[RMDB]
RNA sequence: GGGAACGACUCGAGUAGAGUCGAAAAUAGUCAUCCAGACCUAAAAACAUAUCCUCAGAGGGUGGAGAUUUUACAAUUAAAUAUCGUUGUUCUUGGUGCCCUCUCCCCUGGUUCAUCAAGUAUAAUACACCUAGUAACAAUUCGUUGUUACUAGGUGAAAAGAAACAACAACAACAAC
Reactivity to DMS in 0.01 (KOAc 150mM, MgCl2 10mM, bicine 150mM(pH8.5), 24C), signal-to-noise 6, nucleotides 027 to 126: u010a070g020u010c040a080u000c030c040a090g000a110c030c040u020a040a070a050a100a070c110a100u010a080u010c040c040u000c110a090g010a060g000g030g020u000g000g000a090g010a040u000u010u010u010a050c090a060a090u000u020a070a090a110u020a070u000c080g010u000u000g010u000u000c020u000u000g020g000u000g000c300c000c010u000c030u000c010c010c010c060u000g000g020u010u000c040a030u000c050a030a070g010u000a080u010a040a080u010a180
Reactivity to 2A3 in 0.01 (KOAc 150mM, MgCl2 10mM, bicine 150mM(pH8.5), 24C), signal-to-noise 3, nucleotides 027 to 126: u090a010g050u010c030a080u050c060c020a030g080a110c010c010u100a130a040a010a050a010c060a110u200a050u160c030c020u030c030a010g020a000g070g030g010u060g080g030a040g020a020u090u100u100u210a050c030a070a060u170u180a270a100a070u180a080u080c060g020u000u040g040u060u010c000u030u020g090g010u070g000c010c000c000u000c040u030c000c010c010c000u020g070g010u020u020c000a040u010c020a020a070g040u090a080u050a220a080u090a070

This 177-nucleotide RNA was probed chemically with DMS and 2A3. Reactivities are given for positions 27 through 126. It was measured as part of the RMDB library OK2TRN. DMS adducts were read by reverse transcription with MarathonRT.